An RNA of 177 nucleotides, treated with 2A3 and DMS and read out base by base.
[RMDB]
RNA sequence: GGGAACGACUCGAGUAGAGUCGAAAAUUGAGCCGCGUCCGAGCCGUCAACCUCCUGGACGGUGGGAUCUCCGAAGCUAAACAGCUGCUGUGAGAUCCGCUGUCGCAGCGCGGCGUCACCGUCGCCGGUCGGAGUAGGUGUUCGCACCUACUCCGACAAAAGAAACAACAACAACAAC
Reactivity to 2A3 in 0.01 (KOAc 150mM, MgCl2 10mM, bicine 150mM(pH8.5), 24C), signal-to-noise 4, nucleotides 027 to 126: u140u140g010a030g020c010c000g010c020g020u000c090c030g040a030g030c040c030g120u060c010a090a110c020c030u070c010c010u070g060g000a010c000g020g010u060g170g000g030a020u000c000u000c000c000g050a040a010g000c000u100a300a090a240c120a110g010c000u070g030c040u060g190u200g090a000g000a000u000c000c000g000c000u010g000u000c020g000c180a020g010c000g010c000g000g020c010g030u030c020a030c050c020g080u090c010g000c020c020g050
Reactivity to DMS in 0.01 (KOAc 150mM, MgCl2 10mM, bicine 150mM(pH8.5), 24C), signal-to-noise 1, nucleotides 027 to 126: u080u000g000a120g000c000c010g000c010g000u000c250c080g030a060g000c030c030g030u000c110a030a120c100c030u000c030c050u000g000g000a000c000g020g000u010g000g000g000a020u010c000u000c000c000g000a230a000g010c000u000a030a190a200c180a070g000c000u000g000c140u000g020u030g000a010g000a000u000c000c030g000c030u010g020u000c000g010c070a100g050c060g010c020g000g000c070g030u000c060a090c090c070g020u000c000g000c040c030g030

Source: RMDB library OK1LIB, as collected in RNAgym. The reactions ran in a buffer of 150 mM KOAc, 10 mM MgCl2 and 150 mM bicine (pH 8.5), at 24 C.